[RMDB]
RNA sequence: GGGAACGACUCGAGUAGAGUCGAAAAGUCGCCGCGUCUACAUCAACGCCCAGCGCGGGCGAGGGAUGCGUCCUACGGGGGUGUCCCAUUCGCCGGCAUGGCAGAGGACGGCAAGAUUGCCGCGACGACCAUUAGGGAGUUUCGACUCCCUAAUGGUAAAAGAAACAACAACAACAAC
Reactivity to 2A3 in 0.01 (KOAc 150mM, MgCl2 10mM, bicine 150mM(pH8.5), 24C), signal-to-noise 9, nucleotides 027 to 126: g010u000c000g000c010c010g000c010g000u000c010u040a060c010a090u060c020a080a050c060g040c020c020c020a070g010c300g070c130g300g010g000c000g000a020g000g010g000a010u010g010c050g300u200c010c010u040a130c190g040g000g000g000g000u020g010u020c000c000c010a090u090u040c010g000c010c000g030g000c040a060u040g020g000c020a020g020a050g090g040a040c030g020g000c020a000a020g050a040u190u300g010c010c020g000c010g000a010c010g010
Reactivity to DMS in 0.01 (KOAc 150mM, MgCl2 10mM, bicine 150mM(pH8.5), 24C), signal-to-noise 9, nucleotides 027 to 126: g010u000c010g020c000c240g020c020g000u000c000u000a120c080a130u000c030a070a170c130g000c080c010c090a110g010c110g020c040g010g000g010c000g010a030g000g000g010a010u000g000c010g000u010c000c000u010a100c190g060g000g010g000g030u000g010u000c000c000c000a110u010u000c000g020c000c000g000g020c020a100u010g010g010c040a110g000a270g000g000a060c050g000g010c120a070a050g000a050u000u010g040c010c180g000c010g000a030c040g000